[RMDB]
RNA sequence: GGGAACGACUCGAGUAGAGUCGAAAACAUCCAGUGUUCGCACUGGAUGAGAGGAAUGUGGAUCGGCAAUCUACAUACCAAAAGCUGAGCUCGAAAGAGCAACGAUUUCGUCGUUCGCGACGAAAAAGUCAUUCUGAAAUUUCGAUUUCAGAAUGACAAAAGAAACAACAACAACAAC
Reactivity to 2A3 in 0.01 (KOAc 150mM, MgCl2 10mM, bicine 150mM(pH8.5), 24C), signal-to-noise 6, nucleotides 027 to 126: c000a010u000c000c000a000g000u010g040u030u080c220g050c080a000c010u000g010g000a000u000g000a020g010a010g000g030a060a010u010g000u010g000g010a020u050c110g240g030c120a030a010u000c010u020a000c000a010u030a040c000c000a040a060a060a010g080c130u130g060a010g030c000u010c010g030a090a050a040g010a000g010c010a010a030c020g050a060u020u010u020c010g000u000c000g020u030u070c260g000c000g070a010c000g000a020a000a000a010a000
Reactivity to DMS in 0.01 (KOAc 150mM, MgCl2 10mM, bicine 150mM(pH8.5), 24C), signal-to-noise 4, nucleotides 027 to 126: c000a000u000c000c000a000g010u010g020u000u000c220g010c010a020c000u000g000g000a000u000g000a030g020a100g010g000a130a000u000g010u000g000g000a010u000c130g020g030c200a130a180u000c000u010a010c010a020u010a110c020c000a090a070a100a110g010c120u010g000a270g000c000u000c010g000a080a030a140g000a030g020c010a050a090c140g010a190u000u000u000c000g010u000c010g010u000u010c170g020c020g000a010c010g000a000a000a030a070a090